RNA sequence: GGGAACGACUCGAGUAGAGUCGAAAAAUGGAACUCUCAGCAAAUAUAGGCUGUCUGAAAUUACUAUUAUGACCCAGAGAGGCUUAGGAAAGAGAUUGGGACUACAUGCCUUCAGCAUGCCUGUGAGAUAUGUCAAACUGUUCGCAGUUUGACAUAUAAAAGAAACAACAACAACAAC
Reactivity to 2A3 in 0.01 (KOAc 150mM, MgCl2 10mM, bicine 150mM(pH8.5), 24C), signal-to-noise 4, nucleotides 027 to 126: a010u080g020g020a040a030c010u000c000u010c040a030g010c060a080a180a020u240a040u050a130g060g010c030u020g030u110c020u030g040a000a060a040u130u070a080c030u040a050u240u060a070u200g050a070c000c000c040a020g030a010g030a080g140g000c030u080u070a030g060g090a140a090a010g080a020g010a020u050u130g020g010g020a020c020u070a030c040a040u070g040c020c000u050u050c010a020g010c020a020u120g000c000c000u010g010u030g020a120g000
Reactivity to DMS in 0.01 (KOAc 150mM, MgCl2 10mM, bicine 150mM(pH8.5), 24C), signal-to-noise 6, nucleotides 027 to 126: a060u010g010g010a100a130c090u000c030u010c020a100g010c090a080a090a090u000a090u010a070g020g020c050u000g000u020c020u000g010a060a050a080u010u000a120c100u000a070u000u000a070u010g000a140c030c010c020a090g000a110g010a080g010g000c040u000u010a050g010g010a050a070a110g000a100g000a110u000u000g010g000g010a100c050u000a070c140a070u000g000c120c080u000u000c080a050g010c030a040u010g000c030c030u010g000u000g010a120g010
Chemical mapping of a 177-nucleotide RNA with 2A3 and DMS. The data come from the RNA Mapping Database (RMDB), library OK2TRN. The reactions ran in a buffer of 150 mM KOAc, 10 mM MgCl2 and 150 mM bicine (pH 8.5), at 24 C. 2A3 is a SHAPE reagent: it acylates the 2'-hydroxyl of flexible nucleotides of all four kinds. DMS adducts were read by reverse transcription with MarathonRT. For 2A3 the reverse transcriptase was SuperScript II with manganese.